Source information
Chemical mapping of a 177-nucleotide RNA with DMS and 2A3. In probing experiments dimethyl sulfate is read out at A N1 and C N3, which are open when not base-paired. Values cover nucleotides 27 to 126. Conditions: 150 mM KOAc, 10 mM MgCl2 and 150 mM bicine (pH 8.5), 24 C. For 2A3 the reverse transcriptase was SuperScript II with manganese. The DMS profile rests on 547 reads. High 2A3 reactivity points to a flexible backbone, as in loops and unpaired stretches.

RNA sequence: GGGAACGACUCGAGUAGAGUCGAAAAGAUAUGGAGCGUGAACUACUGCUAAGGAUCUGAUGACCUCGGAAACGAGCAAGGAUCCGAAGCAGCACGCUCCUAAGUCAAACCCGCGUUCGCGCGGGAAGGGUAUCAAAAGGUUCGCCUUUUGAUACCCAAAAGAAACAACAACAACAAC
Reactivity to DMS in 0.01 (KOAc 150mM, MgCl2 10mM, bicine 150mM(pH8.5), 24C), signal-to-noise 1, nucleotides 027 to 126: g000a000u000a300u000g030g000a000g030c000g010u000g000a040a060c040u000a300c030u000g000c000u030a050a300g000g000a000u000c000u000g030a140u060g000a010c300c000u000c000g000g000a160a080a120c040g000a040g030c120a010a180g000g020a000u000c030c010g000a280a010g000c000a050g000c000a000c000g000c000u000c000c000u050a040a030g000u000c060a090a010a180c000c000c000g000c010g000u000u000c240g040c000g000c030g000g010g010a000a040
Reactivity to 2A3 in 0.01 (KOAc 150mM, MgCl2 10mM, bicine 150mM(pH8.5), 24C), signal-to-noise 1, nucleotides 027 to 126: g040a010u100a040u160g000g000a000g000c000g000u010g010a080a030c110u300a050c030u300g010c010u000a080a020g000g010a000u000c000u000g000a260u130g050a300c020c000u000c000g000g000a090a090a030c010g010a000g050c010a090a160g010g000a000u070c000c000g000a020a010g030c000a000g020c000a000c000g030c000u010c000c000u020a020a010g020u010c000a000a000a120c000c000c010g040c030g000u020u050c300g000c020g020c030g150g000g000a050a120